[RMDB]
RNA sequence: GGGAACGACUCGAGUAGAGUCGAAAAACGGGCAGUGGCGAUGGCAACGCGGCAGCCGCAGGGUCGACUUCUUCGCAGCCGCAACAGACGGGCGACGGGCAAAGAGGGGCACUCGUUCUGUUGGAAGGAUUAUAAUACCUUUCGAGGUAUUAUAAUCAAAAGAAACAACAACAACAAC
Reactivity to 2A3 in 0.01 (KOAc 150mM, MgCl2 10mM, bicine 150mM(pH8.5), 24C), signal-to-noise 9, nucleotides 027 to 126: a000c040g010g020g000c040a050g030u040g060g020c040g050a090u070g040g010c030a060a040c060g010c000g050g010c020a010g030c030c020g000c030a030g040g010g020u060c020g030a060c010u080u040c000u060u040c070g000c040a030g030c010c020g030c010a020a030c010a020g050a020c020g010g000g020c020g020a050c030g020g020g020c050a060a090a020g060a060g020g010g010g000c010a020c030u020c000g040u110u020c020u040g020u020u000g010g030a070a040g100
Reactivity to DMS in 0.01 (KOAc 150mM, MgCl2 10mM, bicine 150mM(pH8.5), 24C), signal-to-noise 6, nucleotides 027 to 126: a110c100g000g000g000c030a050g010u010g000g000c050g000a080u020g010g020c060a080a050c120g010c040g000g000c060a090g000c040c040g030c110a050g000g000g010u010c050g010a050c080u000u010c030u000u020c110g020c060a090g020c040c030g020c040a060a060c110a050g000a070c060g000g010g020c050g000a060c060g000g010g020c070a040a070a100g000a090g000g000g000g000c030a060c060u010c050g000u020u010c030u010g010u000u000g010g000a080a080g000
Source: RMDB library OK1LIB, as collected in RNAgym. Structure probing data (2A3 and DMS) for a 177-nucleotide construct. Values are in units of 0.01, from 0 to 300, in steps of 10. In probing experiments dimethyl sulfate is read out at A N1 and C N3, which are open when not base-paired. For 2A3 the reverse transcriptase was SuperScript II with manganese. The reactions ran in a buffer of 150 mM KOAc, 10 mM MgCl2 and 150 mM bicine (pH 8.5), at 24 C.